[RMDB]
Structure probing data (2A3) for a 207-nucleotide construct.
As a SHAPE reagent, 2A3 marks flexible, mostly unpaired nucleotides at the ribose 2'-OH.
RNA sequence: GGGAACGACUCGAGUAGAGUCGAAAAAAACUGGAGCUAUGAUUGCCAGCGAAUAUUAUAGAGCAAAUCUUUCAAGUCAUUUCUUCUUAGGAAUGGGCCUUUCAGAAAUAGGAGAACAAGUUAGGGGCGAAGGAUUUAUUUCUGGAAAUCAAAAUCACCUAGUACGCGUAUUCGUACGCGUACUAGGAAAAGAAACAACAACAACAAC
Reactivity to 2A3 in 0.01 (KOAc 150mM, MgCl2 10mM, bicine 150mM(pH8.5), 24C), signal-to-noise 1, nucleotides 027 to 156: a000a010a000c020u020g050g000a010g040c070u020a000u160g020a080u060u120g030c000c000a000g030c020g010a000a020u010a070u200u180a130u100a030g100a000g050c010a060a260a070u060c070u000u110u090c090a130a120g000u120c010a000u030u020u050c020u170u040c030u080u170a020g030g000a000a010u030g020g010g030c030c010u030u130u120c020a020g110a050a060a020u050a030g050g030a080g000a040a030c010a230a000g060u090u070a050g060g040g010g000c040g000a030a000g010g000a000u110u000u000a050u010u100u000c020u000g030g090a020a010a050u050c000a000a000a160a000u100c020a070